Structure probing data (DMS and 2A3) for a 207-nucleotide construct. The reactions ran in a buffer of 150 mM KOAc, 10 mM MgCl2 and 150 mM bicine (pH 8.5), at 24 C. For DMS, 3,728 sequencing reads were counted.
RNA sequence: GGGAACGACUCGAGUAGAGUCGAAAACUCAAACUUCGGUUUGAGAAAAAGCGUACUACGCUAGACAUGAAGGUGAAUGGGAGUCCCAAAUAGGACGACGAUCAUUCAUCAUCUUCAACAGCUAGCGUAUCGCAAAAAAGACCGCUUCGGCGGUCAAUAUCUAUGUUCUCUUCGGAGAACAUAGAUAAAAAGAAACAACAACAACAAC
Reactivity to DMS in 0.01 (KOAc 150mM, MgCl2 10mM, bicine 150mM(pH8.5), 24C), signal-to-noise 2, nucleotides 027 to 156: c030u000c010a000a040a000c010u000u000c300g080g030u000u000u000g010a000g000a030a060a070a130a130g020c020g020u000a090c130u000a000c000g000c000u000a010g010a080c080a300u000g010a060a070g030g000u000g010a060a020u010g010g010g010a220g010u000c000c000c010a080a160a290u010a120g010g000a040c000g000a100c100g040a100u020c010a020u000u000c010a040u000c070a030u000c060u000u000c050a070a090c080a140g000c000u000a020g010c000g020u000a040u020c060g000c020a000a060a070a140a100a210g010a030c000c000g010c020u000u010c280g060g050c020g020g030u010c010a000a070
Reactivity to 2A3 in 0.01 (KOAc 150mM, MgCl2 10mM, bicine 150mM(pH8.5), 24C), signal-to-noise 3, nucleotides 027 to 156: c000u000c000a000a000a010c010u030u040c140g110g020u010u000u040g010a010g170a110a080a000a000a000g020c030g010u040a120c050u000a000c030g000c010u000a000g020a070c060a090u070g010a020a020g000g010u010g010a050a030u010g000g000g010a040g010u010c020c030c060a160a300a170u280a100g000g020a010c060g010a040c000g000a040u030c000a020u050u070c010a010u010c000a020u010c020u020u000c020a060a070c040a100g030c000u010a000g000c000g000u000a020u040c000g010c000a060a060a000a070a000a000g000a000c010c000g020c030u060u050c200g190g010c000g010g000u000c000a000a000